[RMDB]
RNA sequence: GGGAACGACUCGAGUAGAGUCGAAAAAGAAGAAGGUAACGGAGAAAGGAGCGGGCCUCCCGAUCCGAGUGGUCCACGGCGUAUCAAGUUUGGAGUCAUCCGGCCGAAGGGUUGAGAUGACCCACAGAAGGAAGUAUGUUCGCAUACUUCAAAAGAAACAACAACAACAAC
Reactivity to DMS in 0.01 (KOAc 150mM, MgCl2 10mM, bicine 150mM(pH8.5), 24C), signal-to-noise 9, nucleotides 027 to 129: a020g020a040a020g000a020a010g000g010u050a060a080c100g010g020a020g010a060a110a070g010g010a070g000c170g020g010g000c080c020u030c040c000c030g020a080u040c050c060g010a080g030u020g030g020u030c020c080a060c090g000g000c050g000u040a010u030c070a060a060g030u040u030u020g000g000a140g020u010c030a000u000c020c010g020g010c000c000g010a140a080g010g020g010u000u010g000a130g010a030u000g010a020c020c010c010a050c150a080g040a120a090g000
Reactivity to 2A3 in 0.01 (KOAc 150mM, MgCl2 10mM, bicine 150mM(pH8.5), 24C), signal-to-noise 9, nucleotides 027 to 129: a000g050a010a000g010a010a010g030g010u060a070a020c050g020g010a020g000a040a070a030g030g010a030g020c090g010g040g010c000c010u070c000c000c000g020a020u010c030c020g020a030g030u090g000g010u010c020c010a040c060g030g000c030g040u080a060u160c080a070a060g030u070u140u090g050g010a130g000u000c010a000u000c000c000g020g000c000c000g050a060a070g150g000g000u050u020g120a190g000a150u030g010a000c000c010c000a030c010a020g130a100a050g140
An RNA of 170 nucleotides, treated with DMS and 2A3 and read out base by base. The RNA was probed in 150 mM KOAc, 10 mM MgCl2 and 150 mM bicine (pH 8.5) at 24 C. For 2A3, 56,815 sequencing reads were counted. For DMS the reverse transcriptase was MarathonRT. The data come from the RNA Mapping Database (RMDB), library 15KLIB.